[RMDB]
RNA sequence: GGGAACGACUCGAGUAGAGUCGAAAAGCCGCUAACGCAAUUGCUACCUCUGGCAUAACAAGUAUAUCGGGUAAGGGUUUCUGUUCCGCACACGCAGACGCAGAGUAUCGUUAAGAUGUCCAUAUUGCAGAUGAGGGUAGUUCGCUACCCUCAUCUGAAAAGAAACAACAACAACAAC
Reactivity to DMS in 0.01 (KOAc 150mM, MgCl2 10mM, bicine 150mM(pH8.5), 24C), signal-to-noise 1, nucleotides 027 to 126: g030c060c080g030c060u050a050a120c080g020c070a030a050u010u010g010c060u000a060c030c010u010c040u000g030g000c060a080u000a080a140c090a090a090g010u040a110u000a140u000c040g010g000g000u010a090a100g010g020g030u000u020u000c010u000g030u000u000c020c020g010c050a040c140a030c090g000c040a060g000a080c120g000c030a090g000a110g030u010a010u000c040g020u000u000a070a120g050a110u010g000u000c010c010a040u010a100u000u000g000
The record gives the reactivity of an RNA of 177 nucleotides to DMS. Values are in units of 0.01, from 0 to 300, in steps of 10. The reactions ran in a buffer of 150 mM KOAc, 10 mM MgCl2 and 150 mM bicine (pH 8.5), at 24 C.